Annotation: The record gives the reactivity of an RNA of 177 nucleotides to 2A3 and DMS. The RNA was probed in 150 mM KOAc, 10 mM MgCl2 and 150 mM bicine (pH 8.5) at 24 C. For 2A3 the reverse transcriptase was SuperScript II with manganese. It was measured as part of the RMDB library TTRDES.
[RMDB]
RNA sequence: GGGAACGACUCGAGUAGAGUCGAAAAGAUAUGGAGAUCCUAAGGGAGGCUUGAUGUCGGAAACGACAUACAGCCUUUGAUCUUAGGGAUCUCCUAAGUCAAACUUUGCAUGUUCGCAUGCAAAGAACAUGUGACAUUGGUUCGCCAAUGUCACAUGAAAAGAAACAACAACAACAAC
Reactivity to 2A3 in 0.01 (KOAc 150mM, MgCl2 10mM, bicine 150mM(pH8.5), 24C), signal-to-noise 2, nucleotides 027 to 126: g020a020u070a000u140g010g000a000g000a010u030c010c010u020a000a000g050g040g030a060g050g030c050u180u300g080a000u010g010u010c000g000g020a080a130a080c000g000a000c010a000u060a110c010a010g010c000c020u020u050u030g010a010u000c010u000u010a050g080g000g000a010u000c000u000c000c000u000a040a000g030u010c020a020a040a180c020u040u020u020g000c010a000u010g090u090u190c300g020c080a000u000g000c000a030a010a000g020a010a020
Reactivity to DMS in 0.01 (KOAc 150mM, MgCl2 10mM, bicine 150mM(pH8.5), 24C), signal-to-noise 3, nucleotides 027 to 126: g000a060u000a300u020g010g010a010g010a060u010c000c000u000a030a020g000g000g000a010g020g030c000u000u020g020a050u000g010u000c010g010g010a150a060a230c000g020a010c010a010u000a070c110a040g010c010c010u000u000u010g000a040u010c010u000u010a050g020g000g010a020u000c000u000c000c000u000a000a060g010u000c020a180a170a260c020u000u000u000g000c000a010u000g010u000u020c270g030c000a010u000g020c000a000a000a000g010a090a220